[RMDB]
RNA sequence: GGGAACGACUCGAGUAGAGUCGAAAAUCCACUAUGAAUCUAGUCACUAAAUAAGCACAAUUAGCUACUGUGUGUAAUAGUGAGUGUUGAUAACACAAAAUAAUAGUAUAGUUUUGGAAGAUUAUACGCGCCCUUGCUCCGUUCGCGGAGCAAGGAACUUAUCCUGAUUGUUCGCAAUCAGGAUAAGAAAAGAAACAACAACAACAAC
Reactivity to DMS in 0.01 (KOAc 150mM, MgCl2 10mM, bicine 150mM(pH8.5), 24C), signal-to-noise 2, nucleotides 027 to 156: u010c050c020a150c180u010a100u030g000a130a100u020c050u000a160g010u010c010a030c010u000a000a000a130u000a110a300g000c000a000c020a020a060u000u000a230g010c240u010a040c050u000g020u000g000u000g010u000a110a220u000a010g010u010g000a050g010u000g010u020u000g050a130u010a100a110c030a090c030a020a050a090a110u000a060a300u000a090g000u000a030u000a030g030u000u000u000u010g000g000a130a140g000a020u000u000a020u000a020c040g010c100g020c120c010c010u000u020g030c000u000c000c000g070u000u000c270g040c050g000g000a000g000c000a000a000g000g010a020a040
Reactivity to 2A3 in 0.01 (KOAc 150mM, MgCl2 10mM, bicine 150mM(pH8.5), 24C), signal-to-noise 6, nucleotides 027 to 156: u020c030c000a040c070u190a200u260g140a080a040u060c060u110a060g100u020c000a000c000u010a020a030a080u040a050a000g000c010a010c020a030a090u110u100a110g050c080u170a100c080u030g000u000g010u000g000u010a010a030u000a030g000u000g020a020g000u020g010u020u040g130a170u270a300a010c030a000c030a040a180a030a050u260a080a070u060a160g010u010a020u010a030g010u000u020u100u170g110g040a080a020g000a050u040u010a010u030a030c030g020c010g050c050c000c000u000u000g000c000u000c000c000g040u060u050c200g020c000g100g000a000g000c000a000a000g000g000a000a000